[RMDB]
RNA sequence: GGGAACGACUCGAGUAGAGUCGAAAAACGAUACAUAUUCAACUAACAAACUGUCCUACAACGACUGGACAACCAGAGCAGCCCUGUUCGCCUACCGCACCGGCAAGAAAGUCAACAUCUCAAGCCACCUCGCAAGUUCACUCACAUCACUCAAGCCAUGCUAGUGGAGUUUCGACUCCACUAGCAUAAAAGAAACAACAACAACAAC
Reactivity to 2A3 in 0.01 (KOAc 150mM, MgCl2 10mM, bicine 150mM(pH8.5), 24C), signal-to-noise 2, nucleotides 027 to 156: a010c090g010a020u130a120c060a060u070a150u280u190c140a070a040c150u170a050a030c080a070a010a040c050u060g000u030c030c020u010a030c040a080a050c080g180a050c070u060g000g040a020c000a020a070c040c010a020g010a010g000c010a030g010c000c000c010u000g000u010u040c010g000c000c020u110a130c010c010g000c010a000c010c020g030g000c020a000a050g000a060a060a000g060u000c000a000a050c000a120u020c000u010c060a040a000g000c040c000a050c020c020u040c030g020c030a030a030g040u130u050c070a050c040u010c010a010c010a010u090c010a000c130u010c040a010a000g300c000c300
This 207-nucleotide RNA was probed chemically with 2A3. The data come from the RNA Mapping Database (RMDB), library OK3TST. The reactions ran in a buffer of 150 mM KOAc, 10 mM MgCl2 and 150 mM bicine (pH 8.5), at 24 C.